[RMDB]
RNA sequence: GGGAACGACUCGAGUAGAGUCGAAAAGUGAUGGCAAGGUCAGAAUAGCGCUGAGGUCUGCCUCGUGAAGAAGGUGUUGCUGACUCAUACCAGGCCUGAAUAGCUUCAUCAUCCAGCCAGAAAGUUAUGUCCGUGCACAAUUCGUUGUGCACGGACAAAAAGAAACAACAACAACAAC
Reactivity to DMS in 0.01 (KOAc 150mM, MgCl2 10mM, bicine 150mM(pH8.5), 24C), signal-to-noise 1, nucleotides 027 to 126: g000u000g030a140u000g000g080c010a150a120g030g000u000c060a040g000a110a140u000a070g050c160g000c020u000g030a090g000g000u030c150u010g000c080c020u000c060g030u000g010a120a170g030a170a080g030g000u000g010u000u000g010c050u010g010a140c050u010c070a080u010a050c080c000a010g000g000c080c050u040g000a030a060u020a060g010c000u030u010c060a040u000c020a060u010c040c030a060g000c070c060a110g010a070a040a060g010u020u000a060